Chemical mapping of a 207-nucleotide RNA with DMS and 2A3. It was measured as part of the RMDB library OK3TST.
[RMDB]
RNA sequence: GGGAACGACUCGAGUAGAGUCGAAAAGAGGCGAAAUAAUUCCCAUCUCCUAUGUACGGCCGGAGAUGGGUGUGGCCGUACUAAUAAGCCUCAUAGUGACGAGAGUCACGAAUUCUGGAUAGCCUGUGGUAGUCGGCUAUCCUGUGACUACCGUAGACGGUAUUACGUAGUUCGCUACGUAAUACCGAAAAGAAACAACAACAACAAC
Reactivity to DMS in 0.01 (KOAc 150mM, MgCl2 10mM, bicine 150mM(pH8.5), 24C), signal-to-noise 3, nucleotides 027 to 156: g030a030g030g030c000g020a080a090a130u000a090a140u000u000c000c000c000a110u000c030u010c020c020u000a100u010g020u000a030c030g010g000c030c040g020g000a140g030a070u000g010g050g020u010g020u010g000g000c030c010g000u000a130c020u000a110a110u000a100a160g000c020c010u000c010a120u010a100g030u000g000a040c010g000a170g020a200g010u000c000a020c010g000a050a130u000u010c180u000g010g010a070u000a030g010c010c000u000g040u020g010g020u000a100g000u010c300g000g010c000u000a010u000c030c030u000g000u010g000a070c030u000a030c020c000g030u000a080g000a250
Reactivity to 2A3 in 0.01 (KOAc 150mM, MgCl2 10mM, bicine 150mM(pH8.5), 24C), signal-to-noise 6, nucleotides 027 to 156: g010a010g000g000c030g050a050a080a040u170a040a100u130u040c000c010c000a020u020c040u020c020c020u110a070u120g030u020a010c010g010g000c020c010g060g030a110g030a090u220g060g000g030u080g020u070g010g000c010c010g000u010a010c000u020a020a080u060a050a010g000c000c000u000c020a040u110a040g150u140g060a010c050g010a020g000a000g230u000c000a000c010g020a040a050u190u050c060u070g000g000a000u000a000g010c000c030u080g020u070g070g130u060a070g110u120c030g000g000c000u000a000u000c000c010u010g010u010g010a010c010u080a170c020c030g020u030a040g020a100